An RNA of 177 nucleotides, treated with 2A3 and DMS and read out base by base. Values cover nucleotides 27 to 126. 2A3 adducts were read by reverse transcription with SuperScript II with manganese.

RNA sequence: GGGAACGACUCGAGUAGAGUCGAAAAAGGUCACGUGGGACGAACAUGGAAAAACCAUAUAUGUUGAUAGACUGUGCACAUUUACAUAUAGAGCUAGUUUUCAAUGGUUUCAUGAUACAGAAGUUCACAAUGGCUGGAGAUUCGUCUCCAGCCAUUGAAAAGAAACAACAACAACAAC
Reactivity to 2A3 in 0.01 (KOAc 150mM, MgCl2 10mM, bicine 150mM(pH8.5), 24C), signal-to-noise 1, nucleotides 027 to 126: a000g050g030u110c010a020c030g000u040g000g050g050a000c010g020a060a050c020a060u000g050g060a090a040a020a000a020c030c020a030u040a010u010a000u190g040u060u020g030a020u030a090g060a050c060u070g010u040g110c060a010c010a130u120u090u110a080c030a010u070a030u080a110g060a020g080c060u030a080g010u000u000u000u100c040a050a040u050g020g010u010u010u050c000a000u040g030a010u030a120c030a030g200a170a020g080u020u070c030a000
Reactivity to DMS in 0.01 (KOAc 150mM, MgCl2 10mM, bicine 150mM(pH8.5), 24C), signal-to-noise 2, nucleotides 027 to 126: a100g000g020u010c050a070c050g040u010g000g010g030a050c070g000a070a230c080a050u000g020g000a020a020a020a040a070c040c040a080u010a060u010a040u000g010u020u000g000a030u000a090g010a080c080u000g000u000g020c080a070c050a070u000u000u030a030c100a060u000a050u000a020g010a150g000c060u010a050g000u000u000u000u000c040a090a050u010g010g000u000u000u000c010a030u010g010a150u000a070c080a070g000a130a090g010u000u000c070a140
The RNA was probed in 150 mM KOAc, 10 mM MgCl2 and 150 mM bicine (pH 8.5) at 24 C.